RNA sequence: GGGAACGACUCGAGUAGAGUCGAAAAAGCGUCUUCAGAGAGAUUGCAACGAUGAAGCUACUGUGUCAUUCAUCGGCAAUCUCUCUAGGAGACUGGAGAGUGAGAGUCUGAGAAAGACGCAGUAGCUUCUCAGAAUCUCUCACUCUCUGAAGACGCACGUAGCAAGUAUGUUCGCAUACUUGCUACGAAAAGAAACAACAACAACAAC
Reactivity to DMS in 0.01 (KOAc 150mM, MgCl2 10mM, bicine 150mM(pH8.5), 24C), signal-to-noise 1, nucleotides 027 to 156: a160g010c010g040u000c000u000u000c000a070g020a040g010a010g020a030u000u010g010c020a040a120c020g000a020u000g020a050a040g020c030u010a100c060u000g030u000g000u000c040a300u010u000c000a050u000c010g010g010c020a080a020u000c000u010c000u000c000u000a030g020g000a210g020a230c000u020g010g000a010g000a040g040u030g040a100g000a080g000u000c000u000g010a090g020a080a070a070g040a050c040g040c030a270g010u020a150g000c020u000u000c010u000c060a000g000a100a080u010c010u000c060u000c020a010c020u000c000u000c000u000g020a040a000g010a050c000g040c020a130
Reactivity to 2A3 in 0.01 (KOAc 150mM, MgCl2 10mM, bicine 150mM(pH8.5), 24C), signal-to-noise 1, nucleotides 027 to 156: a000g000c000g000u000c000u000u000c000a010g000a000g000a000g000a010u010u070g050c030a110a040c040g010a000u080g010a000a010g000c000u050a020c030u080g030u010g030u040c010a140u030u000c010a020u010c020g010g010c000a000a010u010c000u000c000u000c000u000a000g000g000a020g000a000c000u000g000g000a000g000a000g010u050g010a040g000a000g030u020c040u050g040a000g000a000a040a000g000a010c010g000c020a010g000u030a020g000c000u000u000c000u000c000a000g000a000a010u040c010u000c010u010c010a010c010u010c000u000c000u000g010a000a000g000a000c000g000c000a000